[RMDB]
RNA sequence: GGGAACGACUCGAGUAGAGUCGAAAACCAGCAGCCAUGACCUACCAGGCUGCGGUGCGGCUCGCCGGACAGGUCAUCCCUCAUCGGGCGCGUCCUGCGUCCUUCCACGCCAACCCACAAGGGAUCUAAAACACGUUGGGCUUCGGCCCAACGUGAAGUAAUCGUCAUAGUUCGCUAUGACGAUUACAAAAGAAACAACAACAACAAC
Reactivity to 2A3 in 0.01 (KOAc 150mM, MgCl2 10mM, bicine 150mM(pH8.5), 24C), signal-to-noise 2, nucleotides 027 to 156: c030c030a030g000c050a000g000c000c030a170u110g060a190c040c050u270a180c120c260a060g010g040c000u010g000c000g000g000u020g030c020g000g030c020u020c000g000c000c000g030g050a040c080a220g010g000u020c020a030u070c000c070c000u040c050a170u200c050g010g000g010c000g000c000g120u300c010c050u110g010c000g050u000c000c000u040u020c040c000a100c080g040c010c050a090a080c050c060c000a140c080a300a200g000g030g010a000u030c030u150a020a050a050a030c010a000c000g000u020u000g000g000g020c000u040u000c130g160g000c000c000c000a000a000c000g000u000g000a000a000

Structure probing data (2A3) for a 207-nucleotide construct. The data come from the RNA Mapping Database (RMDB), library M2RFPK. 2A3 adducts were read by reverse transcription with SuperScript II with manganese. Conditions: 150 mM KOAc, 10 mM MgCl2 and 150 mM bicine (pH 8.5), 24 C.